[RMDB]
RNA sequence: GGGAACGACUCGAGUAGAGUCGAAAAGUCACGAGGAGACUCGUGACAGCAUGCUUCGGCAUGCAAGGGUCGGCAUGGCAUCUCCACCUCCUCGCGGUCCGACCUGGGCAUCCGAAGGAGGACGCACGUCCACUCGGAUGGAUAAAGGAGAGCCAAAGUAUUUAGGUACGUUCGCGUACCUAAAUACAAAAGAAACAACAACAACAAC
Reactivity to 2A3 in 0.01 (KOAc 150mM, MgCl2 10mM, bicine 150mM(pH8.5), 24C), signal-to-noise 3, nucleotides 027 to 156: g000u000c000a000c000g000a000g020g030a070g020a060c000u000c010g000u000g000a000c000a000g010c000a000u000g000c000u070u040c210g100g010c000a000u000g000c030a040a130g030g000g000u010c010g000g020c090a090u050g020g000c010a210u000c020u000c010c010a020c010c010u020c020c000u070c080g040c080g060g000u000c000c010g010a020c000c010u030g010g000g010c000a010u000c010c030g030a080a060g050g030a160g000g010a020c030g080c100a110c220g000u000c000c000a010c010u020c030g020g010a020u000g000g020a010u080a070a070a030g000g000a000g000a000g000c000c000a020a040a010
Reactivity to DMS in 0.01 (KOAc 150mM, MgCl2 10mM, bicine 150mM(pH8.5), 24C), signal-to-noise 1, nucleotides 027 to 156: g000u000c000a000c000g020a010g000g000a300g000a230c040u000c000g080u020g010a020c000a050g000c010a000u010g010c000u000u020c280g030g020c000a020u000g010c000a070a150g050g030g000u000c010g040g000c110a260u010g050g010c000a090u010c000u000c000c000a130c070c050u000c000c100u010c100g000c000g000g060u010c000c010g020a080c020c020u000g040g020g050c020a030u000c000c020g030a060a150g010g040a160g030g020a020c020g010c140a130c100g000u010c010c010a070c030u000c030g000g010a050u000g040g020a050u000a020a050a040g010g010a040g000a300g000c000c010a010a130a300